[RMDB]
RNA sequence: GGGAACGACUCGAGUAGAGUCGAAAAAGGUAGUCGUGGUGGCGCGUGCCUGAAAUCCCAGCUACUCAGGAGAAUCGGUUGAACCUGGGAGGCAGGGGUUGCAAUGAGCCGAGAUGGCACCACUGCACUCCAGCCUGGGCAAUAAGAGCAAAACUCAGGAUUUUAUUAUCUUCGGAUAAUAAAAUCCAAAAGAAACAACAACAACAAC
Reactivity to DMS in 0.01 (KOAc 150mM, MgCl2 10mM, bicine 150mM(pH8.5), 24C), signal-to-noise 1, nucleotides 027 to 156: a070g070g000u010a050g010u000c080g030u020g010g020u080g000g030c060g080c030g030u000g000c050c020u000g000a110a080a130u000c010c010c010a110g030c040u000a110c010u000c010a040g000g000a060g010a050a070u000c040g030g010u020u020g020a170a170c030c000u010g000g000g000a300g050g090c020a050g020g000g010g000u020u010g000c020a060a060u010g010a160g000c260c040g040a300g040a080u000g010g050c040a040c070c010a020c010u000g010c010a080c010u000c020c010a110g010c020c000u000g010g020g030c080a080a080u010a050a060g000a040g030c020a100a120a060a300c010u000c010a270
Reactivity to 2A3 in 0.01 (KOAc 150mM, MgCl2 10mM, bicine 150mM(pH8.5), 24C), signal-to-noise 2, nucleotides 027 to 156: a000g060g040u080a020g020u070c070g080u060g010g100u080g060g000c040g010c020g120u120g030c020c000u030g010a080a100a030u070c010c010c000a000g000c000u050a020c000u000c050a020g030g030a060g130a120a160u210c070g140g070u100u230g030a100a110c010c010u020g000g000g010a020g050g000c040a050g000g010g000g020u050u010g000c010a000a150u100g010a090g000c000c010g060a090g050a160u230g030g030c010a000c020c040a010c020u010g000c030a040c030u050c020c000a000g000c000c010u040g000g110g000c070a070a100u130a120a050g020a000g040c050a010a300a000a060c010u080c090a070

Structure probing data (DMS and 2A3) for a 207-nucleotide construct.